[RMDB]
RNA sequence: GGGAACGACUCGAGUAGAGUCGAAAAAUAGUGAUGCUGUAUCCUACAAGUCUAGUACAACGUAUAAACUGACUGUAGGUGACAUCUUCGUACUUACCUCUCACUCUGUGGCUACCUUGACGGCGCCUUACCAUACUGUUCGCAGUAUGGAAAAGAAACAACAACAACAAC
Reactivity to 2A3 in 0.01 (KOAc 150mM, MgCl2 10mM, bicine 150mM(pH8.5), 24C), signal-to-noise 9, nucleotides 027 to 129: a000u180a020g080u050g030a020u030g010c100u050g020u090a050u080c000c000u000a010c020a160a070g000u000c040u270a010g030u050a080c090a220a040c230g150u170a070u120a220a170a030c020u010g010a000c000u000g000u000a000g000g010u020g000a000c000a010u020c000u050u040c040g070u040a050c020u030u040a040c010c010u010c010u010c020a050c040u060c050u080g060u050g050g000c020u050a110c040c000u040u110g090a040c040g020g010c010g010c010c000u010u020a050
Reactivity to DMS in 0.01 (KOAc 150mM, MgCl2 10mM, bicine 150mM(pH8.5), 24C), signal-to-noise 9, nucleotides 027 to 129: a060u060a070g030u020g010a010u020g030c090u020g010u020a080u030c000c000u000a000c020a060a100g000u020c010u090a000g030u000a090c170a130a120c300g060u080a100u030a080a090a050c060u000g000a020c000u000g010u020a010g020g000u000g000a070c020a020u000c020u030u010c040g020u050a020c040u000u030a090c070c000u000c030u000c050a100c090u030c060u020g010u020g000g010c030u020a120c060c030u020u040g030a060c070g020g000c300g000c060c020u040u010a100